[RMDB]
Structure probing data (2A3 and DMS) for a 177-nucleotide construct. Values cover nucleotides 27 to 126.

RNA sequence: GGGAACGACUCGAGUAGAGUCGAAAAUAAGUCUAGUUCGCUAGACUUACUAUCGGGAAAACAGCCUCCCGGCACGAUCAGGCGGAUUCCGUCCAAGCGCUGCAACACACGUAUUCGUACGUGUGAAUCGUUGAGUACACUUCGGUGUACUCAACGAAAAAGAAACAACAACAACAAC
Reactivity to 2A3 in 0.01 (KOAc 150mM, MgCl2 10mM, bicine 150mM(pH8.5), 24C), signal-to-noise 1, nucleotides 027 to 126: u070a000a000g000u000c000u000a010g040u020u080c200g030c090u000a000g000a000c000u000u000a010c010u040a030u110c010g020g010g000a030a160a020a020c000a000g010c000c010u010c000c010c020g000g000c070a070c060g070a110u150c070a050g010g000c030g000g110a280u300u100c050c020g010u000c040c030a040a000g060c070g060c180u000g060c040a090a050c000a000c000a000c000g000u010a010u070u070c260g010u040a010c010g000u000g000u000g000a000a070
Reactivity to DMS in 0.01 (KOAc 150mM, MgCl2 10mM, bicine 150mM(pH8.5), 24C), signal-to-noise 2, nucleotides 027 to 126: u010a010a010g010u000c000u000a010g000u000u020c210g010c010u010a010g000a000c000u000u000a010c060u010a070u010c020g010g020g010a030a030a040a180c050a050g020c030c020u000c000c010c000g000g000c190a080c130g000a130u010c190a170g000g000c020g000g000a180u000u010c010c000g030u020c010c100a040a060g000c120g010c030u000g000c080a130a190c020a000c000a000c000g020u000a020u000u000c240g000u000a010c020g010u000g000u000g000a030a060